[RMDB]
RNA sequence: GGGAACGACUCGAGUAGAGUCGAAAAGAAAGAAACCAAGGAGCGAUGGAAGACGUGGACCACGUGUUUGGAAUUCAUAUCUGGUCCCAAACUCCAAGUGGAAAGAUAUCGUGCGUAGUCGGCUCCAGUCAUCGUAGCUCUUCGGAGCUACGAUGACAAAAGAAACAACAACAACAAC
Reactivity to 2A3 in 0.01 (KOAc 150mM, MgCl2 10mM, bicine 150mM(pH8.5), 24C), signal-to-noise 1, nucleotides 027 to 126: g110a050a110a000g040a060a040a000c010c010a000a130g000g000a010g020c040g030a020u030g050g280a060a070g000a040c050g000u040g040g040a020c010c000a010c000g010u030g020u000u020u030g080g020a070a060u230u270c010a010u100a100u180c160u060g020g000u000c000c000c000a010a000a000c040u000c040c050a050a070g060u060g040g000a160a120a050g080a070u120a020u220c110g010u100g090c000g040u080a010g040u060c020g080g010c030u000c000c000a000
Reactivity to DMS in 0.01 (KOAc 150mM, MgCl2 10mM, bicine 150mM(pH8.5), 24C), signal-to-noise 1, nucleotides 027 to 126: g000a110a090a210g040a070a070a090c000c030a160a170g070g020a020g000c000g060a160u030g000g000a220a070g020a030c020g090u000g000g070a150c000c000a020c000g040u020g000u030u010u000g000g000a030a100u000u010c040a020u000a090u000c250u000g000g030u020c010c010c000a010a050a020c080u020c060c180a060a140g010u000g020g000a100a110a060g030a070u010a130u000c000g000u000g030c030g010u000a230g000u000c050g030g000c000u000c010c000a240